[RMDB]
RNA sequence: GGGAACGACUCGAGUAGAGUCGAAAAGCCGACUGCACGUGCGUGCGAGCAGUUUUCGAAAUCGCACGUUUCACGUAAAGACCCAACUCUACUGGAUGCGAGGGUCAGCAAGCAAGCAGCAAUAAAAUACUGGUCGUAUAUUCGUAUACGACCAGUAAAAAGAAACAACAACAACAAC
Reactivity to 2A3 in 0.01 (KOAc 150mM, MgCl2 10mM, bicine 150mM(pH8.5), 24C), signal-to-noise 2, nucleotides 027 to 126: g130c000c000g080a080c030u020g000c030a020c040g010u010g010c010g010u010g000c000g000a070g080c070a060g000u030u030u070u220c050g040a070a040a120u010c000g000c020a000c000g010u010u110u060c010a000c010g000u020a060a070a020g010a010c010c000c000a030a020c030u000c000u110a150c170u180g040g060a040u070g050c080g060a140g040g000g030u000c000a000g010c030a050a000g000c000a050a050g000c000a010g060c020a060a080u170a170a070a040a000
Reactivity to DMS in 0.01 (KOAc 150mM, MgCl2 10mM, bicine 150mM(pH8.5), 24C), signal-to-noise 3, nucleotides 027 to 126: g000c020c040g020a150c040u000g000c090a060c000g000u000g000c020g010u000g000c010g000a040g040c110a120g010u010u000u030u000c150g000a050a130a120u000c000g000c000a010c010g010u000u000u000c060a010c000g000u000a040a110a090g010a060c000c010c000a120a090c090u000c050u000a060c090u000g000g030a070u000g020c070g000a180g000g000g020u000c010a090g000c080a030a070g000c080a080a070g010c030a030g020c070a100a080u010a080a050a060a140
This 177-nucleotide RNA was probed chemically with 2A3 and DMS. The data come from the RNA Mapping Database (RMDB), library M2PK90. Conditions: 150 mM KOAc, 10 mM MgCl2 and 150 mM bicine (pH 8.5), 24 C. Values cover nucleotides 27 to 126.